[RMDB]
RNA sequence: GGGAACGACUCGAGUAGAGUCGAAAACGCACGGCUGCCGCGAUCGCCAAGCAGGUCGGCAUCGAGAAGGUGCUGGCCGAGGUGUUGCCGCAGGACAAGGUAGCUGAGGUUCGGCGGCUGCAGGACCUCCCGCACUGUUGUUCGCAACAGUGCGGGAAAAAGAAACAACAACAACAAC
Reactivity to DMS in 0.01 (KOAc 150mM, MgCl2 10mM, bicine 150mM(pH8.5), 24C), signal-to-noise 1, nucleotides 027 to 126: c060g010c060a160c050g130g000c020u000g000c010c020g060c070g010a040u030c030g010c020c040a110a080g040c130a150g000g040u000c000g000g010c000a000u000c010g020a280g000a110a130g020g000u000g000c010u000g000g010c020c010g030a050g000g010u010g000u010u010g000c060c120g100c110a030g000g000a060c060a070a060g010g000u010a030g020c050u000g000a110g010g000u000u010c030g000g000c000g010g030c130u000g000c060a040g010g000a040c050c030
Reactivity to 2A3 in 0.01 (KOAc 150mM, MgCl2 10mM, bicine 150mM(pH8.5), 24C), signal-to-noise 2, nucleotides 027 to 126: c060g000c010a030c010g040g020c040u030g040c040c040g060c040g080a110u100c080g000c060c020a030a050g070c020a050g040g000u010c010g020g000c010a000u010c050g160a070g110a300a130g090g020u020g010c020u000g000g030c010c020g000a060g000g030u060g010u030u070g030c030c020g040c040a060g040g050a090c090a030a160g050g060u130a040g060c060u050g020a040g040g000u020u010c000g030g010c000g030g040c120u140g000c060a050g010g060a060c000c030